[RMDB]
RNA sequence: GGGAACGACUCGAGUAGAGUCGAAAAGAUAUGGAUACAUCGAUCGACGAGGACAACAGCUCGGAAACGAGACAUGUCCGAGUCGGGAGUAUCCUAAGUCAAAGGAAUGUCCUUCGGGACAUUCCAACAAGCUCAAUGGCUUCGGCCAUUGAGCUUGAAAAGAAACAACAACAACAAC
Reactivity to DMS in 0.01 (KOAc 150mM, MgCl2 10mM, bicine 150mM(pH8.5), 24C), signal-to-noise 1, nucleotides 027 to 126: g000a030u000a300u000g000g000a000u000a000c010a110u010c130g000a060u010c000g000a000c010g000a300g000g000a030c000a030a090c300a150g000c000u000c000g000g000a100a030a200c020g000a020g010a030c090a160u000g010u000c000c000g000a270g000u000c010g000g000g020a020g000u000a000u000c000c010u000a050a030g000u000c000a120a060a090g000g000a000a010u000g030u000c000c040u010u000c250g000g050g000a000c000a000u000u010c000c000a010a070